This 177-nucleotide RNA was probed chemically with DMS and 2A3. For DMS, 1,946 sequencing reads were counted. The RNA was probed in 150 mM KOAc, 10 mM MgCl2 and 150 mM bicine (pH 8.5) at 24 C. DMS adducts were read by reverse transcription with MarathonRT.

RNA sequence: GGGAACGACUCGAGUAGAGUCGAAAACAACACGUCUUCGGACGUGUUGAAACGUGGUGCGUACGAUAACGCAUAUAAAGCCCAAGACAAGCAGGGCAAAAUAAACAACCAGCUUCGGCUGGUUGAAGAUUUGGAAACAGUUCGCUGUUUCCAAAUCAAAAGAAACAACAACAACAAC
Reactivity to DMS in 0.01 (KOAc 150mM, MgCl2 10mM, bicine 150mM(pH8.5), 24C), signal-to-noise 3, nucleotides 027 to 126: c020a000a020c000a000c000g030u010c000u000u010c200g020g000a010c010g010u010g000u000u000g000a030a050a300c020g020u000g010g060u000g000c020g010u000a020c000g000a160u000a020a020c000g020c010a020u010a100u000a040a080a110g020c000c000c000a090a130g000a300c240a110a120g010c110a100g020g010g010c040a050a030a070a040u010a100a080a160c010a000a000c000c000a000g000c000u000u010c200g020g000c010u000g000g010u000u000g000a040a090
Reactivity to 2A3 in 0.01 (KOAc 150mM, MgCl2 10mM, bicine 150mM(pH8.5), 24C), signal-to-noise 2, nucleotides 027 to 126: c000a010a000c000a000c020g010u020c010u040u050c150g110g000a000c000g000u010g000u000u020g000a010a010a010c010g000u070g070g000u010g030c030g000u010a000c030g010a090u010a070a000c000g020c020a000u020a010u000a030a070a000g010c000c000c000a040a010g150a140c110a080a050g050c080a100g010g000g000c000a000a060a000a070u060a000a030a010c010a000a000c000c000a000g000c000u040u070c070g150g000c000u000g000g020u000u000g000a000a000